RNA sequence: GGGAACGACUCGAGUAGAGUCGAAAAGAAGACACCAUUCCAGUGGACCACUGUGACCUAAGAAGCAUUCAGCCAUCAUGAUGUGGCCUUUACCUCCACUCCUGUCCUUUCUACCCAGAUUCAGCACGUGGCUUCCAAACUUCGGUUUGGAAGCCACAAAAGAAACAACAACAACAAC
Reactivity to 2A3 in 0.01 (KOAc 150mM, MgCl2 10mM, bicine 150mM(pH8.5), 24C), signal-to-noise 1, nucleotides 027 to 126: g080a030a000g020a000c010a000c030c010a120u050u060c030c000a000g010u070g030g100a090c090c030a060c020u060g140u100g060a040c000c000u140a230a030g080a210a060g060c000a000u130u230c000a100g000c000c000a050u020c010a020u120g010a070u110g090u090g000g010c000c010u050u030u120a090c020c020u090c000c020a020c050u010c000c000u130g000u070c000c010u030u070u000c000u000a000c010c000c000a000g040a040u090u110c100a000g000c040a000c020